[RMDB]
RNA sequence: GGGAACGACUCGAGUAGAGUCGAAAAUUACACUAGUGUGGCAGGCUGGCAGCCUACCAGAUAACCAUUUUGAUUGUUCAUAAAGUGUUACCUUCAUAUUUUGCAAAACCUCUUAUCCAAUUGCGAGAGCUACAGGGCGAUUCGUCGCCCUGUAGCUAAAAGAAACAACAACAACAAC
Reactivity to 2A3 in 0.01 (KOAc 150mM, MgCl2 10mM, bicine 150mM(pH8.5), 24C), signal-to-noise 1, nucleotides 027 to 126: u100u080a050c050a000c000u080a020g000u060g000u070g120g000c070a020g050g020c000u000g020g000c130a060g000c000c000u000a050c000c000a020g000a000u150a000a050c000c000a000u000u000u000u200g020a020u000u200g000u050u030c030a050u130a110a210a070g000u100g000u060u010a020c000c000u000u230c020a050u010a050u140u100u000u070g000c000a000a100a000a000c050c040u000c000u000u170a190u170c140c160a210a000u000u080g000c050g000a010g000

This 177-nucleotide RNA was probed chemically with 2A3. 2A3 adducts were read by reverse transcription with SuperScript II with manganese. The reactions ran in a buffer of 150 mM KOAc, 10 mM MgCl2 and 150 mM bicine (pH 8.5), at 24 C. For 2A3, 407 sequencing reads were counted.